[RMDB]
RNA sequence: GGGAACGACUCGAGUAGAGUCGAAAAGAUAUGGACUGCACAGCCAUUUGAGCUGUGAUUCGGAAACGAAUCCAGCGAGGCUGCUGCAGUCCUAAGUCAAAACUGUUGCGGCUUCGGCCGCAACAGACAUAUACGAUACCUUCGGGUAUCGUAUAUGAAAAGAAACAACAACAACAAC
Reactivity to 2A3 in 0.01 (KOAc 150mM, MgCl2 10mM, bicine 150mM(pH8.5), 24C), signal-to-noise 3, nucleotides 027 to 126: g000a000u010a000u030g000g000a000c010u000g000c010a000c000a010g000c000c010a050u270u190u170g020a010g000c010u030g140u300g090a000u010u010c000g000g000a000a010a000c000g000a000a000u000c000c000a010g000c000g010a050g000g010c010u010g000c030u000g000c000a000g000u000c000c000u000a000a000g000u010c000a000a000a040a110c000u010g000u010u010g010c000g000g030c030u070u160c300g210g000c000c000g030c000a000a000c000a000g000a000
Reactivity to DMS in 0.01 (KOAc 150mM, MgCl2 10mM, bicine 150mM(pH8.5), 24C), signal-to-noise 8, nucleotides 027 to 126: g000a010u000a010u010g000g000a020c000u000g000c000a030c010a000g030c000c050a300u000u000u020g000a060g010c000u000g010u010g010a010u000u000c000g020g000a000a000a020c000g000a010a000u000c000c000a000g010c000g000a000g040g020c000u000g000c210u000g010c000a000g010u000c000c000u000a000a060g000u010c010a120a080a140a210c010u000g000u000u000g010c000g010g010c000u000u010c300g030g020c000c000g000c000a000a000c000a000g010a170